Source: RMDB library M2PK50, as collected in RNAgym.
Chemical mapping of a 177-nucleotide RNA with 2A3 and DMS.
The reactions ran in a buffer of 150 mM KOAc, 10 mM MgCl2 and 150 mM bicine (pH 8.5), at 24 C.
The 2A3 profile rests on 8,385 reads.
In probing experiments dimethyl sulfate is read out at A N1 and C N3, which are open when not base-paired.
RNA sequence: GGGAACGACUCGAGUAGAGUCGAAAACCCGUUCAUUUCGAUGAACGGGAGUGGGUAACCCUAGGACCAGUAGUGGGACCCGUAGUGGCCGUGCGACCAGUAAAGAGUUAACAUUCGUGUUAACUAAGUUAAAAUGUGGAUUCGUCCACAUUUUAACAAAAGAAACAACAACAACAAC
Reactivity to 2A3 in 0.01 (KOAc 150mM, MgCl2 10mM, bicine 150mM(pH8.5), 24C), signal-to-noise 5, nucleotides 027 to 126: c000c010c000g000u010u000c000a020u000u040u150c230g140a010u010g010a010a000c000g010g030g000a020g080u120g020g000g030u060a150a190c020c010c010u030a070g050g050a060c020c010a050g050u100a030g050u270g040g020g010a060c000c020c000g010u050a050g040u040g030g000c050c030g020u050g030c040g050a100c000c010a020g030u130a030a160a060g150a010g020u000u000a000a000c010a010u040u130c170g020u030g000u030u000a010a010c010u020a070a000
Reactivity to DMS in 0.01 (KOAc 150mM, MgCl2 10mM, bicine 150mM(pH8.5), 24C), signal-to-noise 7, nucleotides 027 to 126: c010c000c000g010u010u000c000a000u000u000u010c170g010a030u010g010a010a010c010g000g000g000a030g010u000g000g000g010u000a080a100c030c010c000u000a120g010g010a190c060c050a070g000u010a070g020u000g010g010g010a080c030c010c020g020u000a050g020u010g000g010c020c020g010u000g010c060g000a070c030c030a090g010u010a060a110a110g010a030g010u000u000a010a010c010a050u000u000c190g020u000g010u000u000a010a010c000u010a040a090